[RMDB]
RNA sequence: GGGAACGACUCGAGUAGAGUCGAAAAGGUCGAGACUUUUUGUAAACGAGUUGCAAAUUGUUAACUUUGCUAGUGAUGUCGGCUUUGGUCGCGUUCUUCGGCACGUUCAAUAGUUCGUAAUAACUUAUAGCGUCAAGAUUGAUAUAGUAAAGAGCGGAAGAUAUUUACGGUUCGCCGUAAAUAUCUUAAAAGAAACAACAACAACAAC
Reactivity to DMS in 0.01 (KOAc 150mM, MgCl2 10mM, bicine 150mM(pH8.5), 24C), signal-to-noise 3, nucleotides 027 to 156: g010g020u000c060g010a170g010a070c040u000u000u000u000u000g010u000a020a070a150c070g010a200g000u010u000g010c010a050a040a140u010u000g010u000u000a080a070c060u010u000u010g010c060u000a090g000u000g010a080u010g020u000c100g030g020c010u000u010u000g030g020u010c010g020c090g020u010u000c010u000u000c020g030g020c040a030c040g020u000u000c070a090a120u000a030g010u000u000c070g010u000a080a050u000a040a040c060u000u000a130u010a040g010c070g000u000c040a060a120g000a100u000u000g020a080u000a060u000a050g020u000a040a060a120g000a110g030c050g030g010
Reactivity to 2A3 in 0.01 (KOAc 150mM, MgCl2 10mM, bicine 150mM(pH8.5), 24C), signal-to-noise 7, nucleotides 027 to 156: g040g020u060c030g030a020g030a120c030u050u060u060u090u100g070u130a090a090a070c070g040a110g070u030u030g020c030a030a050a090u050u030g020u070u080a070a080c040u040u050u090g020c040u090a040g060u060g130a090u100g070u100c010g000g010c000u030u010u050g020g000u020c020g010c070g030u010u020c000u020u020c000g020g030c040a010c030g020u020u030c030a040a030u030a070g010u020u020c060g060u120a060a070u100a080a040c000u060u070a040u030a190g030c010g030u040c030a040a020g010a020u030u120g020a010u090a020u020a170g050u070a050a080a030g060a030g020c060g010g050